[RMDB]
RNA sequence: GGGAACGACUCGAGUAGAGUCGAAAAUCUGAUGGGAAUGACAACGGUCGGUCCAUUUGACUUUAUCAUUACGAUGGUUCUAGUCGUGUUAUGGUAAAGGUCUGUUGAGUGCAAUUGUAGAGCAAAUGUUACAUAAAAAAUUCGUUUUUUAUGUAACAAAAGAAACAACAACAACAAC
Reactivity to 2A3 in 0.01 (KOAc 150mM, MgCl2 10mM, bicine 150mM(pH8.5), 24C), signal-to-noise 8, nucleotides 027 to 126: u050c020u050g010a050u090g040g000g060a070a130u070g020a040c030a170a090c150g150g050u030c010g020g020u040c010c010a020u060u050u170g020a010c000u020u010u000a000u020c010a010u020u040a010c020g020a010u040g060g090u220u080c120u170a030g010u010c010g010u040g050u130u080a010u010g000g010u030a030a020a030g070g030u000c050u030g110u050u080g060a130g050u050g010c040a060a100u090u060g050u090a050g040a020g080c030a010a030a050u080
Reactivity to DMS in 0.01 (KOAc 150mM, MgCl2 10mM, bicine 150mM(pH8.5), 24C), signal-to-noise 8, nucleotides 027 to 126: u010c030u000g010a050u010g010g000g010a100a080u010g010a050c050a110a150c230g030g010u000c030g010g020u000c020c020a040u000u010u010g000a120c020u000u010u000a010u010c010a010u000u000a020c020g000a020u000g020g030u020u010c170u030a200g010u000c010g010u000g000u010u000a010u000g000g000u000a010a020a020g010g010u000c040u000g010u000u000g010a090g010u000g010c070a060a140u010u010g010u000a070g010a140g010c050a050a070a130u010